[RMDB]
RNA sequence: GGGAACGACUCGAGUAGAGUCGAAAAUGCCUUGAGCAGACGCUUGCGGAAGCCUUAGCAGCCCACAAGGGUUCCCCUCGCGACUAUAUUUAAAGGAAGGGGAUUGAAUGCUAGUGCCUGAGCUGCCAACUUGGGUGCGACAUCGCCAAAUUGCGGACACAGUAAUCGGGUUCGCCCGAUUACUGUGAAAAGAAACAACAACAACAAC
Reactivity to 2A3 in 0.01 (KOAc 150mM, MgCl2 10mM, bicine 150mM(pH8.5), 24C), signal-to-noise 1, nucleotides 027 to 156: u120g020c010c000u040u110g080a040g020c040a040g030a100c050g000c070u070u080g020c010g110g020a110a000g060c000c050u020u060a020g010c030a000g000c000c030c000a080c160a070a130g000g010g000u040u010c000c000c000c010u010c020g070c030g020a050c060u090a040u060a070u190u280u160a140a050a030g030g040a030a000g010g000g010g010a010u010u040g040a010a010u000g030c040u000a080g000u010g050c010c000u020g010a020g000c040u040g130c040c010a040a020c040u020u050g000g000g000u040g050c000g030a030c040a060u120c040g030c070c050a090a100a150u120u040g000c000g020g000a000
The data come from the RNA Mapping Database (RMDB), library RSTRND.
Structure probing data (2A3) for a 207-nucleotide construct.
The reactions ran in a buffer of 150 mM KOAc, 10 mM MgCl2 and 150 mM bicine (pH 8.5), at 24 C.
Values cover nucleotides 27 to 156.